[RMDB]
Conditions: 150 mM KOAc, 10 mM MgCl2 and 150 mM bicine (pH 8.5), 24 C. Chemical mapping of a 207-nucleotide RNA with DMS and 2A3. Reactivities are given for positions 27 through 156. For DMS, 2,265 sequencing reads were counted. For 2A3, 705 sequencing reads were counted.
RNA sequence: GGGAACGACUCGAGUAGAGUCGAAAAGCUUUAGGAUUUCCAGUUAUAGUCAUUGUAUCAGGUUCAAAAAGCCUUUCAGAAUAUGUUGGAGAUAAUGGAUCAGAAUCUAUAGGUGCAUUGUUCGUUUUUAUGUAUCUAACUUUGUCUCUGGCAACAAUCCUCUCUUAUCGUUCGCGAUAAGAGAGGAAAAAGAAACAACAACAACAAC
Reactivity to DMS in 0.01 (KOAc 150mM, MgCl2 10mM, bicine 150mM(pH8.5), 24C), signal-to-noise 2, nucleotides 027 to 156: g000c030u010u000u000a300g030g010a230u000u010u000c020c050a260g010u000u000a090u000a050g000u020c060a100u000u010g000u000a050u020c070a030g060g040u000u000c040a090a110a150a260a140g020c000c030u000u030u000c070a160g000a140a100u000a090u000g000u000u010g030g000a010g020a040u000a040a030u000g000g050a040u000c040a130g020a160a300u010c040u010a170u000a060g000g000u000g010c020a040u010u000g000u000u010c180g020u000u000u000u010u000a070u030g050u000a020u010c000u000a060a090c050u000u000u020g010u000c020u000c000u010g000g000c020a000a020c060a050a130
Reactivity to 2A3 in 0.01 (KOAc 150mM, MgCl2 10mM, bicine 150mM(pH8.5), 24C), signal-to-noise 2, nucleotides 027 to 156: g030c050u140u140u160a070g010g060a080u080u070u100c020c030a020g020u050u100a110u060a110g070u100c080a180u050u130g030u040a050u060c080a070g000g050u020u150c070a100a010a100a000a000g000c010c070u040u100u040c070a070g060a140a030u120a060u210g010u000u010g000g020a010g000a000u020a050a030u100g060g040a060u060c100a050g160a210a080u040c050u070a060u080a140g000g000u010g000c030a010u000u050g090u170u170c200g060u040u030u060u100u030a020u030g010u020a030u000c010u020a020a020c000u050u080u000g040u000c020u000c030u040g020g020c000a030a010c010a030a140